The record gives the reactivity of an RNA of 207 nucleotides to 2A3. The reactions ran in a buffer of 150 mM KOAc, 10 mM MgCl2 and 150 mM bicine (pH 8.5), at 24 C. 2A3 adducts were read by reverse transcription with SuperScript II with manganese. For 2A3, 1,681 sequencing reads were counted. It was measured as part of the RMDB library M2RFPK.
RNA sequence: GGGAACGACUCGAGUAGAGUCGAAAAGAAAGAAAGAAAUUAGCUCGCCAGUUAACGAGGUCUGUCCCCACACGACAGAUAAUCGGGUGCAACUCCCGCCCCUUUUCCGAGGGUCAUCGGAACCAAAAAAACUCAGGCAACUUCGGUUGCCUGAGAAGAUAAGAGUGGUGUUCGCACCACUCUUAUCAAAAGAAACAACAACAACAAC
Reactivity to 2A3 in 0.01 (KOAc 150mM, MgCl2 10mM, bicine 150mM(pH8.5), 24C), signal-to-noise 2, nucleotides 027 to 156: g030a040a030a000g080a020a080a040g050a040a150a020u180u100a090g020c030u040c040g050c070c050a080g060u070u120a080a030c040g020a010g000g040u000c010u020g030u030c010c030c020c000a060c010a010c050g020a000c010a010g010a020u050a130a100u130c000g000g000g010u020g010c000a000a000c030u010c020c010c020g000c000c000c000c000u130u200u030u000c010c000g000a010g000g000g030u070c040a010u010c000g000g000a000a000c010c000a080a110a010a040a020a050a050c010u000c000a000g010g000c010a000a010c000u070u140c210g090g010u020u010g000c000c000u000g000a000g000a000a000